[RMDB]
RNA sequence: GGGAACGACUCGAGUAGAGUCGAAAAGCACGGGCCUUUCCGGACGUGCGAACACUUGAGCGGCUGCUCCAGAGCUCUUGUGGAUUAGGACGUUCUACGACUGGUGGUCAACGUAGUUCGUCCGAAAGGCAUGCUUCUGGUUCGCCAGGAGCAUGCCAAAAGAAACAACAACAACAAC
Reactivity to 2A3 in 0.01 (KOAc 150mM, MgCl2 10mM, bicine 150mM(pH8.5), 24C), signal-to-noise 6, nucleotides 027 to 126: g000c010a000c000g060g210g170c020c000u080u150u100c060c040g000g000a010c000g010u010g000c000g000a050a010c030a000c010u010u040g010a010g020c010g240g030c080u110g010c040u050c080c060a030g040a010g070c000u000c000u030u030g030u030g020g070a100u050u140a060g000g000a000c000g000u000u000c010u000a020c010g040a090c060u090g060g020u060g050g070u200c050a050a040c050g010u010a000g000u000u010c000g000u000c010c000g010a010a000a000
Reactivity to DMS in 0.01 (KOAc 150mM, MgCl2 10mM, bicine 150mM(pH8.5), 24C), signal-to-noise 2, nucleotides 027 to 126: g000c000a050c000g000g000g000c000c000u020u040u030c260c110g000g000a080c020g010u030g000c000g020a130a100c040a030c000u000u000g000a110g020c040g000g020c090u010g000c120u020c060c010a080g010a300g000c000u000c020u000u010g000u000g010g010a200u040u050a100g000g000a000c000g010u000u000c010u000a000c040g000a120c080u010g020g000u010g010g000u020c040a120a210c020g000u000a010g030u010u000c000g000u020c000c000g000a000a050a200
Overview: This 177-nucleotide RNA was probed chemically with 2A3 and DMS. DMS adducts were read by reverse transcription with MarathonRT. The RNA was probed in 150 mM KOAc, 10 mM MgCl2 and 150 mM bicine (pH 8.5) at 24 C. For 2A3 the reverse transcriptase was SuperScript II with manganese. Source: RMDB library OK1LIB, as collected in RNAgym. Reactivities are given for positions 27 through 126. The 2A3 profile rests on 5,765 reads. The DMS profile rests on 3,454 reads.